[RMDB]
RNA sequence: GGGAACGACUCGAGUAGAGUCGAAAAGAUAUGGACUGAGAACUACGCACCAUGUAGCUGGUCCGAAGAACUAACUCGGAAACGAGUUAGGGAGGACCAGCUACACAUUUGCGCUCAGUCCUAAGUCCUCAUAUGUUCCGUUCGCGGAACAUAUGAGAAAAGAAACAACAACAACAAC
Reactivity to DMS in 0.01 (KOAc 150mM, MgCl2 10mM, bicine 150mM(pH8.5), 24C), signal-to-noise 2, nucleotides 027 to 126: g010a130u000a300u000g040g000a000c000u000g000a010g020a130a090c140u030a300c030g000c020a040c300c300a220u000g030u000a000g000c010u000g010g000u000c010c020g000a070a100g010a110a210c000u000a000a000c000u000c000g000g000a050a120a230c000g010a030g000u000u000a000g000g000g010a020g030g010a030c010c000a000g040c000u000a000c000a000c140a120u020u010u000g010c010g000c000u000c010a040g000u000c010c010u000a010a090g010u010c050
Reactivity to 2A3 in 0.01 (KOAc 150mM, MgCl2 10mM, bicine 150mM(pH8.5), 24C), signal-to-noise 1, nucleotides 027 to 126: g200a040u170a100u260g000g020a010c000u110g010a010g010a170a160c190u240a000c300g000c010a040c040c060a030u060g000u020a000g000c000u000g040g000u010c010c000g060a210a010g000a020a020c010u000a020a000c010u000c010g090g050a120a010a020c010g010a010g040u000u000a000g000g000g010a020g010g000a010c010c010a000g020c000u000a000c000a000c000a020u010u000u080g000c030g000c000u000c000a000g000u000c000c000u000a020a040g030u000c000
The data come from the RNA Mapping Database (RMDB), library TTRINS. Chemical mapping of a 177-nucleotide RNA with DMS and 2A3. The 2A3 profile rests on 2,624 reads. The RNA was probed in 150 mM KOAc, 10 mM MgCl2 and 150 mM bicine (pH 8.5) at 24 C.